RNA sequence: GGGAACGACUCGAGUAGAGUCGAAAACCGAAGAGGAGAAAGGUUCCAUGUGAACGGCACUUGCACAUGGGUAAGCCGAUCCUAAGGGACGGGGUAACCCCGGCAGACAGCGCGAUCUCGCGUGUUGACGGUGUGACCAUUUCGAUGGUCACACCGUAAAAGAAACAACAACAACAAC
Reactivity to DMS in 0.01 (KOAc 150mM, MgCl2 10mM, bicine 150mM(pH8.5), 24C), signal-to-noise 2, nucleotides 027 to 126: c000c000g030a130a170g000a060g000g000a040g000a040a080a130g020g000u000u000c000c000a040u000g030u000g000a070a100c120g000g020c090a050c090u030u020g000c020a020c030a020u020g000g020g020u020a120a040g000c050c000g000a100u000c000c000u000a060a050g000g040g000a060c000g000g000g050g000u020a190a120c060c030c000c020g010g010c070a130g010a090c200a110g000c040g060c000g000a230u020c180u000c000g040c010g000u000g000u000u000g000
Reactivity to 2A3 in 0.01 (KOAc 150mM, MgCl2 10mM, bicine 150mM(pH8.5), 24C), signal-to-noise 2, nucleotides 027 to 126: c020c000g070a100a050g070a070g090g010a020g080a100a160a010g010g000u150u050c000c000a020u000g050u000g020a220a080c120g070g050c120a050c280u100u190g020c000a000c000a050u000g000g080g030u080a040a040g000c010c000g010a020u010c000c000u020a030a090g090g010g000a010c020g000g010g010g020u130a140a170c010c000c000c000g000g010c020a010g000a110c000a010g000c030g000c000g050a100u010c070u120c140g000c000g000u080g010u120u070g000